Structure probing data (2A3 and DMS) for a 177-nucleotide construct.
For 2A3, 2,482 sequencing reads were counted.
DMS adducts were read by reverse transcription with MarathonRT.

RNA sequence: GGGAACGACUCGAGUAGAGUCGAAAAUUAAAAUAUGAGGCAUCAAGUGGAAGGGUAGUCGGCAGGGUCAAGGUCGGGAAGAAUGAGGACUCUAAACCAACCAAGCUUAUGAGUGGAAUACAAAAAACAAAGUAUCUUAGUUCGCUAAGAUACUUUGAAAAGAAACAACAACAACAAC
Reactivity to 2A3 in 0.01 (KOAc 150mM, MgCl2 10mM, bicine 150mM(pH8.5), 24C), signal-to-noise 3, nucleotides 027 to 126: u080u030a080a000a020a050u290a080u080g000a030g050g000c010a010u030c080a160a010g030u020g090g070a060a030g050g000g020u050a030g030u040c010g040g000c010a010g030g000g000u020c040a040a040g080g000u100c030g000g020g030a050a030g010a040a010u100g030a040g050g070a010c000u000c000u080a100a110a040c030c000a000a040c020c020a020a010g040c020u080u100a060u200g030a040g030u060g000g130a050a050u290a090c100a020a080a000a030a000a000
Reactivity to DMS in 0.01 (KOAc 150mM, MgCl2 10mM, bicine 150mM(pH8.5), 24C), signal-to-noise 4, nucleotides 027 to 126: u010u020a060a070a120a090u010a070u000g010a090g020g010c050a050u010c060a050a090g020u010g000g020a090a060g020g000g030u000a050g010u010c050g020g020c060a060g000g000g000u000c060a060a090g000g020u000c080g020g000g000a060a050g000a050a040u000g000a100g000g010a070c040u000c030u000a010a040a090c030c050a070a110c060c080a060a070g010c090u000u010a050u010g010a060g030u000g010g000a090a070u010a030c090a000a020a100a030a030a070